[RMDB]
RNA sequence: GGGAACGACUCGAGUAGAGUCGAAAAGCCUGACUAGUUCGCUAGUCAGGCAAAAAGCGUACUACUCCAGGAGCAUCCUCCCCACCUCCCAAAUAGGAGAGGGAUGAACUACUCCAUGGAGUAUCGCAAAAAAGCUGUAGGUUUCGACCUACAGCAACGUUGAAAAUGGAUUCGUCCAUUUUCAACGAAAAGAAACAACAACAACAAC
Reactivity to 2A3 in 0.01 (KOAc 150mM, MgCl2 10mM, bicine 150mM(pH8.5), 24C), signal-to-noise 2, nucleotides 027 to 156: g000c030c000u010g020a010c000u000a000g010u070u140c080g000c210u000a000g030u020c000a000g060g030c010a010a030a000a010a010g010c000g040u070a050c020u000a000c000u000c000c010a000g000g000a000g010c020a030u030c000c040u030c050c000c000c020a170c030c020u080c030c000c030a260a190a100u250a090g000g000a000g010a010g010g000g010a000u000g000a010a010c040u110a050c000u140c000c000a280u070g000g010a000g000u010a000u000c020g000c000a040a090a010a000a030a030g000c000u000g020u000a000g020g020u140u040u140c190g080a060c010c000u060a000c000a000g010c010a000a010
Reactivity to DMS in 0.01 (KOAc 150mM, MgCl2 10mM, bicine 150mM(pH8.5), 24C), signal-to-noise 1, nucleotides 027 to 156: g000c000c000u050g000a070c010u000a000g060u020u020c300g030c000u020a000g010u000c000a030g010g000c020a000a020a050a100a030g000c010g040u000a080c140u000a000c000u000c000c000a160g020g000a020g040c040a200u000c010c000u010c000c010c010c030a160c160c000u010c000c010c000a040a150a190u000a090g030g020a070g020a090g040g020g000a000u000g020a100a060c060u000a030c000u000c000c020a160u000g010g010a020g060u000a010u000c010g000c020a000a040a080a040a120a150g010c000u010g000u000a010g010g030u000u010u000c300g020a030c010c000u000a000c000a020g030c020a000a020